[RMDB]
RNA sequence: GGGAACGACUCGAGUAGAGUCGAAAACAUGGAGUCUUCGGACUCCAUGCACUACCGAAAUAAUGCCUCGGUAUAAAAGGCAAACCCUUGGAAACAAGCGAACGAUGUCACGAUUCGUCGUGACAAAAGCUAUUGUACAGUUCGCUGUACAAUAGCUAAAAGAAACAACAACAACAAC
Reactivity to 2A3 in 0.01 (KOAc 150mM, MgCl2 10mM, bicine 150mM(pH8.5), 24C), signal-to-noise 4, nucleotides 027 to 126: c000a000u000g000g000a000g010u000c010u090u090c290g060g010a000c000u000c000c000a000u000g000c010a020c020u040a010c000c000g040a040a050a100u220a100a050u070g010c000c000u010c000g000g000u050a040u140a190a070a000a010g000g000c000a010a040a100c030c010c000u010u020g040g030a030a050a000c010a050a000g020c030g120a050a030c070g100a100u080g010u000c010a000c000g010a010u030u070c180g050u000c000g000u070g000a000c000a000a000a000
Reactivity to DMS in 0.01 (KOAc 150mM, MgCl2 10mM, bicine 150mM(pH8.5), 24C), signal-to-noise 5, nucleotides 027 to 126: c010a010u000g000g010a030g010u000c000u000u020c230g020g000a020c000u010c000c000a000u010g000c060a180c030u000a040c000c000g010a110a140a140u010a130a120u000g000c010c020u000c000g010g020u000a070u020a030a030a040a030g010g000c010a020a110a110c150c110c000u000u000g010g000a170a110a160c040a020a030g000c110g020a070a090c120g000a180u000g010u000c000a000c000g000a030u000u010c170g010u000c000g000u000g010a000c010a000a020a090